[RMDB]
Chemical mapping of a 177-nucleotide RNA with 2A3 and DMS.
The DMS profile rests on 1,594 reads.
2A3 adducts were read by reverse transcription with SuperScript II with manganese.
RNA sequence: GGGAACGACUCGAGUAGAGUCGAAAAAGGCACGCACGUCCAGAAGUGACCGCGUUAGAUCAGUGCUGGAGCAUGGAUUUCGUUGCUGAUAAUCUGUUCAACGGGCAUCGGGUCAGGGCGCUAACUACCGAUGAUUAUGCUUCGGCAUAAUCAUCGGAAAAGAAACAACAACAACAAC
Reactivity to 2A3 in 0.01 (KOAc 150mM, MgCl2 10mM, bicine 150mM(pH8.5), 24C), signal-to-noise 1, nucleotides 027 to 126: a000g080g000c020a030c020g050c010a090c080g030u040c010c020a030g090a210a010g080u070g080a090c000c040g020c070g040u010u050a040g020a040u040c080a020g000u010g010c000u040g000g020a000g000c070a060u110g080g040a140u060u120u080c040g060u020u130g050c010u010g030a000u000a140a010u110c050u060g060u140u070c020a060a040c060g070g040g030c020a020u060c030g000g030g000u030c000a000g000g000g000c000g000c020u020a080a000c040u060a050
Reactivity to DMS in 0.01 (KOAc 150mM, MgCl2 10mM, bicine 150mM(pH8.5), 24C), signal-to-noise 2, nucleotides 027 to 126: a050g010g000c070a060c050g040c100a030c110g000u000c010c010a110g020a150a060g000u000g000a060c120c110g010c050g000u000u020a100g000a050u010c060a110g010u000g030c080u010g000g020a070g010c040a110u000g000g020a100u020u000u000c030g020u010u040g000c100u000g000a130u000a120a080u010c050u010g000u010u000c070a030a050c040g000g000g000c030a040u000c140g050g030g020u000c040a090g040g000g000c080g020c080u000a030a050c130u000a120